[RMDB]
RNA sequence: GGGAACGACUCGAGUAGAGUCGAAAACUCUAACACAGGAUGCUUCUUUGCACACACAGAUGGCUCGUUCGGAACACCACCUGGAUACGGCUGCGCUGCAGACCGGGCAGAGGAGCAGCGCCGGCACGAGUCGAUCCAAAUUCGUUUGGAUCGACUCAAAAGAAACAACAACAACAAC
Reactivity to DMS in 0.01 (KOAc 150mM, MgCl2 10mM, bicine 150mM(pH8.5), 24C), signal-to-noise 2, nucleotides 027 to 126: c030u000c030u010a090a140c190a090c140a170g030g010a300u000g020c020u000u000c000u020u010u000g000c030a110c140a150c300a170c030a010g000a030u000g000g050c030u000c130g010u000u030c250g000g010a150a110c060a130c010c010a070c020c020u000g010g010a170u000a100c090g000g000c000u000g030c010g000c110u010g000c010a030g010a110c000c010g000g010g000c050a020g000a060g020g000a020g010c000a030g020c130g040c020c030g030g010c120a090c180
Reactivity to 2A3 in 0.01 (KOAc 150mM, MgCl2 10mM, bicine 150mM(pH8.5), 24C), signal-to-noise 1, nucleotides 027 to 126: c000u040c010u070a150a000c020a000c030a180g050g020a060u040g000c020u040u060c010u000u040u080g000c060a050c020a000c000a000c020a100g000a030u030g030g000c070u100c300g150u180u140c100g120g060a100a020c030a030c040c000a000c000c000u020g000g020a080u080a110c010g070g000c010u010g000c300g050c180u180g000c010a020g060a240c000c010g050g060g000c040a000g040a040g060g000a000g000c010a000g000c020g040c000c010g070g000c050a030c080